[RMDB]
RNA sequence: GGGAACGACUCGAGUAGAGUCGAAAAUACUCAUGGGAAGUCGGCACGACUCCCGACUAACGUGGAUGUCCGCUGUCCGGCUCCAGGCAAAGAGCGUUGGUGCGGACGUUGAGUAGCCGCGCGCCAACAUAGUCGGCAUUUUCGAAUGCCGACUAUGAAAAGAAACAACAACAACAAC
Reactivity to 2A3 in 0.01 (KOAc 150mM, MgCl2 10mM, bicine 150mM(pH8.5), 24C), signal-to-noise 4, nucleotides 027 to 126: u110a010c010u010c020a050u040g030g010g010a110a020g020u010c000g000g050c020a010c070g010a000c010u010c000c000c000g010a040c070u140a180a050c030g090u210g010g010a060u190g010u030c050c050g000c150u030g030u030c000c000g010g000c010u000c000c000a000g060g010c060a050a060a050g060a070g040c020g040u030u090g010g010u040g010c000g000g000a030c030g020u030u040g030a040g010u040a030g050c040c040g020c010g010c010g000c010c000a020a030
Reactivity to DMS in 0.01 (KOAc 150mM, MgCl2 10mM, bicine 150mM(pH8.5), 24C), signal-to-noise 5, nucleotides 027 to 126: u010a030c010u000c010a080u040g000g020g000a090a040g020u000c010g010g000c020a060c050g010a020c020u000c000c000c000g000a150c230u060a120a100c090g030u050g000g020a020u040g020u000c050c080g010c190u010g010u050c010c000g000g020c000u000c000c010a110g010g010c110a040a100a100g020a080g010c090g000u000u010g020g030u000g000c000g010g000a050c100g000u000u000g000a050g000u010a040g010c060c020g010c010g010c020g000c010c000a060a070
This 177-nucleotide RNA was probed chemically with 2A3 and DMS. The reactions ran in a buffer of 150 mM KOAc, 10 mM MgCl2 and 150 mM bicine (pH 8.5), at 24 C.